An RNA of 207 nucleotides, treated with 2A3 and read out base by base. Reactivities are given for positions 27 through 156. The RNA was probed in 150 mM KOAc, 10 mM MgCl2 and 150 mM bicine (pH 8.5) at 24 C.
RNA sequence: GGGAACGACUCGAGUAGAGUCGAAAACGGCAUUUCCCCAGCAGCCAUGACCUACCAGGCUGCGGUGCGGCUCGCCGCACAGGUCAUCCCUCAUCGGGCGCGUCCUGCGUCCUUCCACGCCAACCGAAGACCAUUGCUUCCUUCGGGAAGCAAUGAAGAUUUUGCAUUAGUUCGCUAAUGCAAAAUCAAAAGAAACAACAACAACAAC
Reactivity to 2A3 in 0.01 (KOAc 150mM, MgCl2 10mM, bicine 150mM(pH8.5), 24C), signal-to-noise 2, nucleotides 027 to 156: c050g090g000c060a070u010u050u050c000c010c020c000a030g010c000a000g000c000c030a180u140g020a020c000c010u080a160c080c080a030g020g000c020u020g000c010g000g000u010g020c000g000g000c070u100c130g170c000c010g010c000a000c030a020g020g040u030c010a110u080c050c030c030u120c070a110u130c050g000g040g000c020g010c000g060u180c030c070u160g000c020g010u020c000c000u050u000c010c000a030c030g040c000c000a050a050c060c010g060a050a010g060a050c000c050a000u000u000g000c000u010u000c000c010u040u060c070g060g000g000a010a000g000c000a000a000u000g010a010a000